[RMDB]
Chemical mapping of a 207-nucleotide RNA with 2A3. For 2A3, 1,031 sequencing reads were counted. Conditions: 150 mM KOAc, 10 mM MgCl2 and 150 mM bicine (pH 8.5), 24 C.

RNA sequence: GGGAACGACUCGAGUAGAGUCGAAAAGAACACGUCUCGGGACGACGCUAAACUCGCCCUGGUCGGGAUGGGUUUAACGACGCCUCGGGUUUCCUAGUUCCUAAAACUAGGUGGUGGAGUCAUAUAAAAAACUUCUACACGUUCGCGUGUAGAAGAAGGACAUUACAGGGUUCGCCCUGUAAUGUCCAAAAGAAACAACAACAACAAC
Reactivity to 2A3 in 0.01 (KOAc 150mM, MgCl2 10mM, bicine 150mM(pH8.5), 24C), signal-to-noise 1, nucleotides 027 to 156: g060a030a040c050a000c070g110u000c010u000c000g000g010g010a000c050g020a020c020g020c010u000a000a000a000c000u000c000g020c000c020c030u180g110g170u180c100g050g020g000a130u050g050g000g000u000u000u020a000a000c000g020a010c000g000c020c000u040c020g000g000g000u070u020u030c000c000u000a000g000u000u020c020c040u130a110a040a000a010c000u010a010g050g000u030g040g000u030g020g040a040g060u130c070a040u080a000u300a180a150a010a010a010a010c010u010u000c000u000a000c000a000c000g020u030u040c210g000c000g100u000g000u000a000g000a010a000g000a000a010